An RNA of 177 nucleotides, treated with 2A3 and read out base by base. For 2A3, 522 sequencing reads were counted. Source: RMDB library OK1LIB, as collected in RNAgym.
RNA sequence: GGGAACGACUCGAGUAGAGUCGAAAAGAGCAGCAUCGAUUUUGAUAUGGACGCCCGGAGCAACUGAUUCGAAGUCAACUGGAGAGCGUGCGAGAUGUGCUGCCAAUAUCAGAACCGAACAUAGCCACACUCAGCAUCCGUUCGCGGAUGCUGAGUGAAAAGAAACAACAACAACAAC
Reactivity to 2A3 in 0.01 (KOAc 150mM, MgCl2 10mM, bicine 150mM(pH8.5), 24C), signal-to-noise 1, nucleotides 027 to 126: g130a000g000c080a000g000c000a000u070c000g240a030u000u000u050u190g020a000u070a080u300g090g050a000c000g140c020c010c000g010g000a000g050c050a020a000c000u030g000a230u200u190c120g010a080a000g010u040c030a000a110c050u060g040g010a030g000a000g000c130g000u090g080c030g000a040g000a000u060g000u020g000c070u000g020c000c000a040a030u050a000u130c010a060g030a030a020c000c000g000a120a000c070a030u260a000g010c030c000a000
Notes: The reactions ran in a buffer of 150 mM KOAc, 10 mM MgCl2 and 150 mM bicine (pH 8.5), at 24 C.